Chemical mapping of a 170-nucleotide RNA with DMS and 2A3. For 2A3, 8,747 sequencing reads were counted.
RNA sequence: GGGAACGACUCGAGUAGAGUCGAAAAAUGUGGCACCAAUGUGCCUCUACAAUUAGGAUUUUCAACUGGUGUGAACUUUGUUGUUCAGCCAGUUGGUGUUGUAGACACUGAGUGGGGUAACAUGUUAAACGUGAGCUGUUCGCAGCUCACAAAAGAAACAACAACAACAAC
Reactivity to DMS in 0.01 (KOAc 150mM, MgCl2 10mM, bicine 150mM(pH8.5), 24C), signal-to-noise 4, nucleotides 027 to 129: a000u020g010u000g020g040c070a090c030c090a080a100u030g050u050g040c000c120u020c000u000a050c020a000a000u000u000a080g070g000a190u020u040u090u050c010a010a030c000u010g000g030u000g040u080g050a080a030c020u010u020u100g040u100u020g020u040u010c000a300g010c050c000a040g040u040u000g000g000u060g010u020u000g010u030a030g020a040c060a020c050u060g040a110g050u050g020g000g010g080u000a110a080c030a060u000g010u000u000a000a000a000c180
Reactivity to 2A3 in 0.01 (KOAc 150mM, MgCl2 10mM, bicine 150mM(pH8.5), 24C), signal-to-noise 5, nucleotides 027 to 129: a000u080g010u040g070g010c050a000c020c000a030a090u110g000u010g010c000c020u010c010u010a000c020a040a010u100u110a070g190g080a140u090u090u060u140c000a000a000c010u000g000g050u140g060u020g100a000a000c010u030u080u200g300u300u110g000u000u180c000a010g010c000c000a000g000u000u000g000g000u020g000u000u030g000u000a000g000a000c010a000c030u070g020a080g100u060g010g000g010g040u040a030a010c010a030u040g080u150u210a110a070a000c060
For DMS the reverse transcriptase was MarathonRT. The reactions ran in a buffer of 150 mM KOAc, 10 mM MgCl2 and 150 mM bicine (pH 8.5), at 24 C. Values cover nucleotides 27 to 129. Source: RMDB library 15KLIB, as collected in RNAgym.